[RMDB]
RNA sequence: GGGAACGACUCGAGUAGAGUCGAAAAACUGAGCUUACGAGCUCAGACUCCCAAAUCUCCUGUUGAAGUGUAAUCCCCACCUCCAGCAUUGGGGAUUACAUUUCAACAUGAGAUUUGGAUGAGGAAACUCCUAUGGAAUCUUCGGAUUCCAUAGGAGAAAAGAAACAACAACAACAAC
Reactivity to DMS in 0.01 (KOAc 150mM, MgCl2 10mM, bicine 150mM(pH8.5), 24C), signal-to-noise 2, nucleotides 027 to 126: a150c010u000g010a000g000c000u000u030a090c140g050a060g010c000u000c000a010g000a150c020u010c000c020c000a000a010a010u000c000u000c000c040u000g000u000u010g000a020a000g000u000g010u010a000a000u000c000c000c000c000a060c200c090u020c050c110a030g000c070a170u020u010g030g010g000g000a000u000u010a000c000a020u000u000u000c000a000a000c010a000u000g000a000g010a010u000u000u010g000g010a090u010g010a010g010g000a120a140a260
Reactivity to 2A3 in 0.01 (KOAc 150mM, MgCl2 10mM, bicine 150mM(pH8.5), 24C), signal-to-noise 3, nucleotides 027 to 126: a000c000u000g000a000g000c000u060u040a060c210g050a020g010c000u000c000a000g010a010c010u000c010c010c020a010a000a000u010c000u000c000c010u000g000u000u000g000a000a000g000u010g000u000a000a000u000c000c000c000c000a030c000c010u170c060c040a020g060c050a140u050u100g000g000g000g000a000u000u000a000c000a010u000u000u000c000a010a000c000a000u000g000a000g000a000u000u000u010g010g000a030u210g030a000g000g060a070a060a050
Overview: An RNA of 177 nucleotides, treated with DMS and 2A3 and read out base by base. The reactions ran in a buffer of 150 mM KOAc, 10 mM MgCl2 and 150 mM bicine (pH 8.5), at 24 C.